[RMDB]
RNA sequence: GGGAACGACUCGAGUAGAGUCGAAAAACGAUCUUCGGAUCGUAAUCACUCCUAAGUCAAUCUGAAGCGUUGAAAUAAACUCCCCACCUCUUCGGAAACGAAGAGAGGUUUAUGGAGUUAAGGAUUGAUAUGGACUAGAGUGCAGUUCGCUGCACAACCUCCUCUGACCUUUCGAGGUCAGAGGAGGAAAAGAAACAACAACAACAAC
Reactivity to 2A3 in 0.01 (KOAc 150mM, MgCl2 10mM, bicine 150mM(pH8.5), 24C), signal-to-noise 1, nucleotides 027 to 156: a000c000g000a000u000c000u040u050c300g240g000a000u000c010g000u110a100a010u070c040a000c050u040c000c000u000a110a000g040u030c000a000a000u000c010u070g040a090a030g020c060g200u230u150g050a130a050a000u100a000a000a010c010u110c010c000c000c000a040c020c000u000c010u100u030c000g060g000a090a010a010c000g000a030a010g020a000g000a000g060g020u020u020u010a020u030g010g010a040g040u010u000a070a010g000g000a000u020u000g000a000u000a020u100g010g060a000c050u100a080g010a040g300u020g020c000a000g010u030u230c270g070c090u000g010c000a000c000a000a000